[RMDB]
RNA sequence: GGGAACGACUCGAGUAGAGUCGAAAAUGAACAAGUACCGCGAGGGAAAGGUGAAAAGAACCGCUGUGAGCGGAGUGAAAUAGAACCUGAAACCGUAUGUCUACAAAGUGUCAGAGCAGAGCAAUCUUCUAUAUGGUUCCUUCGGGAACCAUAUAGAAAAAGAAACAACAACAACAAC
Reactivity to DMS in 0.01 (KOAc 150mM, MgCl2 10mM, bicine 150mM(pH8.5), 24C), signal-to-noise 3, nucleotides 027 to 126: u020g010a110a100c150a030a140g020u030a100c040c040g010c200g010a110g000g010g010a150a050a040g000g000u010g000a100a050a080a110g000a110a140c030c030g000c020u030g000u040g030a120g000c040g000g010a010g000u030g000a060a020a030u050a130g040a090a060c000c020u040g000a080a130a170c100c020g040u010a020u030g020u080c030u000a040c170a060a070a050g040u020g020u000c020a060g020a080g010c000a050g000a060g040c150a110a060u020c070u010
Reactivity to 2A3 in 0.01 (KOAc 150mM, MgCl2 10mM, bicine 150mM(pH8.5), 24C), signal-to-noise 3, nucleotides 027 to 126: u140g030a090a000c040a070a010g050u010a010c020c020g000c030g030a120g070g030g010a020a050a070g020g000u060g040a030a050a010a060g100a030a010c010c000g000c030u070g180u220g200a020g020c000g000g010a010g020u070g060a060a020a070u140a050g090a020a000c010c020u030g020a150a040a010c000c000g020u050a040u140g070u050c000u010a050c050a050a120a040g080u110g040u050c000a010g050a050g090c000a020g030a010g050c000a020a060u030c050u030